[RMDB]
RNA sequence: GGGAACGACUCGAGUAGAGUCGAAAAUCUGGUGCAACCAACAUGCAUUGUUGUAGUCCAAUUGUAGAUAGUAGAGAUGCUAAGCGUCAUGUUGACGCAGGUUUGUUUCUGAAUCAAUCUGUGGAUACUAUGCUCACAUAUUCGUAUGUGAGCAUAGAAAAGAAACAACAACAACAAC
Reactivity to DMS in 0.01 (KOAc 150mM, MgCl2 10mM, bicine 150mM(pH8.5), 24C), signal-to-noise 7, nucleotides 027 to 126: u000c050u010g020g020u000g010c050a070a120c130c050a060a080c140a090u010g010c090a130u000u000g010u000u010g000u000a100g020u000c040c020a060a120u000u000g020u010a090g010a090u000a050g020u000a040g010a100g010a060u000g000c040u000a070a100g010c010g010u000c010a120u010g020u010u010g010a030c020g040c000a110g010g010u000u000u010g010u000u000u000c020u000g010a100a070u000c070a070a060u000c090u000g020u000g020g000a060u010a240
Reactivity to 2A3 in 0.01 (KOAc 150mM, MgCl2 10mM, bicine 150mM(pH8.5), 24C), signal-to-noise 3, nucleotides 027 to 126: u020c040u060g030g000u060g060c040a130a210c040c000a020a040c080a090u120g060c020a040u020u130g050u040u020g060u030a050g060u030c020c010a030a050u060u070g070u080a070g020a170u030a040g110u060a010g030a000g010a010u060g050c100u080a130a120g010c000g000u020c020a040u270g220u300u160g040a010c010g000c010a000g050g000u040u070u120g040u000u010u010c030u020g090a030a090u050c030a020a040u020c060u090g120u110g140g010a000u030a100